[RMDB]
RNA sequence: GGGAACGACUCGAGUAGAGUCGAAAAGCUCUGUAAUGGGAUGGGAUCCGAAGCCCCAUUGAGGGAUAAUACAGGCUCUCCCAUCCAACUGCUAUUCCAACACGUCCUCGUCGUACAGAGUGGUAACUAAGGUAUAGCUCCUUCGGGAGCUAUACAACCUAUCGGCUAACUUCGGUUAGCCGAUAGGAAAAGAAACAACAACAACAAC
Reactivity to 2A3 in 0.01 (KOAc 150mM, MgCl2 10mM, bicine 150mM(pH8.5), 24C), signal-to-noise 1, nucleotides 027 to 156: g030c000u000c040u010g090u040a000a300u230g040g000g000a000u010g000g000g000a040u300c000c000g010a000a010g020c080c000c110c220a240u170u200g060a300g000g000g020a010u050a210a030u070a290c230a100g040g000c000u000c010u010c000c000c000a000u000c000c000a000a020c000u050g020c000u020a060u150u000c070c000a000a000c050a060c060g120u130c000c010u100c020g180u010c000g000u100a000c000a000g000a080g000u000g000g020u010a110a130c020u020a040a020g030g010u000a000u000a000g000c000u000c000c000u040u030c130g000g000g000a000g050c000u000a000u000a000c000a000a000

Source: RMDB library M2RFPK, as collected in RNAgym. Chemical mapping of a 207-nucleotide RNA with 2A3. The reactions ran in a buffer of 150 mM KOAc, 10 mM MgCl2 and 150 mM bicine (pH 8.5), at 24 C. 2A3 adducts were read by reverse transcription with SuperScript II with manganese.